[RMDB]
RNA sequence: GGGAACGACUCGAGUAGAGUCGAAAACGCCCGAACCGGGAUGAGCCGCAUGCCGGGCGGGAGGGACGAGGUCGGGGAAGGGGAGACCCCGAGGAGGAUCUCCAGCUAAAGAGUGGAGGAAAUCUCGCAAGUGUUGGCUUCGGCCAACACAAAAGAAACAACAACAACAAC
Reactivity to DMS in 0.01 (KOAc 150mM, MgCl2 10mM, bicine 150mM(pH8.5), 24C), signal-to-noise 2, nucleotides 027 to 129: c170g050c030c000c000g020a040a150c070c000g000g050g080a050u060g000a110g090c090c110g050c040a050u010g000c010c020g030g020g040c050g020g040g000a110g050g010g020a210c090g030a090g020g050u060c040g000g050g000g000a160a050g050g000g000g020a100g000a070c080c030c020c020g010a020g030g020a060g030g010a070u050c000u030c040c010a020g050c160u050a070a090a090g010a300g020u010g020g000a020g020g040a000a000a000u030c040u040c050g050c170a000a000
Reactivity to 2A3 in 0.01 (KOAc 150mM, MgCl2 10mM, bicine 150mM(pH8.5), 24C), signal-to-noise 3, nucleotides 027 to 129: c040g020c030c000c000g000a080a010c020c020g010g010g020a020u040g030a000g100c020c020g050c080a010u100g050c030c000g000g030g000c060g010g020g020a110g020g010g000a000c060g040a020g000g040u060c030g000g010g000g010a010a030g070g020g010g000a010g000a020c000c000c000c010g000a040g030g010a000g020g020a000u030c010u000c010c020a040g010c000u150a120a130a040g120a060g050u100g000g020a050g010g000a020a070a050u050c050u030c010g040c080a070a100
Overview:
Chemical mapping of a 170-nucleotide RNA with DMS and 2A3. The DMS profile rests on 6,758 reads. For DMS the reverse transcriptase was MarathonRT. The reactions ran in a buffer of 150 mM KOAc, 10 mM MgCl2 and 150 mM bicine (pH 8.5), at 24 C.